[RMDB]
RNA sequence: GGGAACGACUCGAGUAGAGUCGAAAAAUCGAGCAUCUUCGCGCCUGUCGGUGGGGGCGAAUAUGGUCUUCUCGUGCUCGAUACUCAGCCGACAGUUCAGGCCCUGGCGGAUAUCGCCGAACUCGUAAUUUUAAUGGAUGUUCGCAUCCAUUAAAAUAAAAGAAACAACAACAACAAC
Reactivity to 2A3 in 0.01 (KOAc 150mM, MgCl2 10mM, bicine 150mM(pH8.5), 24C), signal-to-noise 4, nucleotides 027 to 126: a000u060c020g000a010g020c000a020u030c020u040u030c020g020c080g130c030c010u060g050u110c060g050g030u080g030g000g010g020g010c020g010a010a010u140a080u060g090g030u030c040u130u040c060u050c020g010u030g010c010u000c000g000a020u030a060c040u040c040a030g030c020c010g020a030c020a030g010u070u110c060a020g090g000c040c000c010u050g000g010c010g000g070a170u110a080u280c010g000c020c000g010a040a020c010u030c070g070u100a090
Reactivity to DMS in 0.01 (KOAc 150mM, MgCl2 10mM, bicine 150mM(pH8.5), 24C), signal-to-noise 7, nucleotides 027 to 126: a080u000c030g000a020g010c010a030u000c100u000u000c010g010c020g010c030c000u000g000u010c060g000g010u000g000g010g010g000g020c010g000a010a020u010a070u010g010g010u000c070u010u000c040u000c030g040u010g010c010u010c010g000a060u010a050c060u000c060a140g010c020c010g000a040c060a060g000u000u000c090a110g010g010c030c050c020u010g000g020c020g010g000a150u010a080u010c030g020c010c010g000a030a050c120u000c110g010u030a080